[RMDB]
Structure probing data (DMS and 2A3) for a 177-nucleotide construct.
The RNA was probed in 150 mM KOAc, 10 mM MgCl2 and 150 mM bicine (pH 8.5) at 24 C.
RNA sequence: GGGAACGACUCGAGUAGAGUCGAAAAUCUCAAAGCUUCGGCUUUGAGACAGUAAGGGAAACCGAUUAUUCCGGUCGACUCCGGAGAAACAAAGUCAUAUAAGAACGUUAGGCUUCGGCCUAACGAACUAUUAGACUUUCUUCGGAAAGUCUAAUAGAAAAGAAACAACAACAACAAC
Reactivity to DMS in 0.01 (KOAc 150mM, MgCl2 10mM, bicine 150mM(pH8.5), 24C), signal-to-noise 4, nucleotides 027 to 126: u000c000u000c000a000a030a010g010c000u000u010c270g020g020c000u000u000u000g000a000g000a010c050a070g020u010a080a120g010g010g010a070a100a200c030c030g000a140u010u000a120u000u000c000c000g000g000u000c020g000a030c000u010c000c000g000g000a030g000a060a010a240c100a010a000a000g000u000c000a170u020a120u010a100a080g000a100a160c000g000u000u000a000g000g000c000u000u020c220g030g000c000c000u000a000a000c010g000a020a090
Reactivity to 2A3 in 0.01 (KOAc 150mM, MgCl2 10mM, bicine 150mM(pH8.5), 24C), signal-to-noise 5, nucleotides 027 to 126: u020c000u000c000a000a000a000g010c010u070u140c230g090g000c000u010u010u010g000a000g000a000c000a020g110u110a070a140g050g020g030a050a040a040c010c020g020a030u090u040a220u290u000c010c040g000g000u000c020g010a010c080u080c300c010g010g000a020g080a010a010a000c010a010a010a010g000u010c050a010u070a030u040a220a100g080a130a020c010g000u000u000a000g000g010c010u020u060c240g080g000c000c000u000a000a000c000g000a000a000